[RMDB]
RNA sequence: GGGAACGACUCGAGUAGAGUCGAAAAAGCCGAGGACUACGGUCCUCGGCAACAACCGUCACAACGGCUUCCUGGCGUGACGGGGUUAACCCCAACGGAGCAAGUGAGAGCUUACGAGCUCGCACAAUUUAGGAGAAUUCCUUCGGGAAUUCUCCAACUAAUCGUCAUGCUUCGGCAUGACGAUUAGAAAAGAAACAACAACAACAAC
Reactivity to 2A3 in 0.01 (KOAc 150mM, MgCl2 10mM, bicine 150mM(pH8.5), 24C), signal-to-noise 1, nucleotides 027 to 156: a000g000c020c020g000a010g000g020a010c020u050a020c300g080g000u000c000c000u000c000g000g020c000a000a000c000a000a000c000c000g000u000c000a020c010a060a070c030g090g000c040u250u140c030c010u030g000g050c020g010u010g000a050c030g000g000g000g010u120u140a060a040c020c010c000c010a050a080c110g010g000a010g010c060a140a140g040u000g000a010g000a000g030c010u030u040a060c160g040a010g000c000u010c010g020c020a020c020a080a130u080u160u280a040g000g040a010g000a000a000u000u020c000c000u040u050c200g120g000g000a000a000u000u020c000u000c000c000a000a000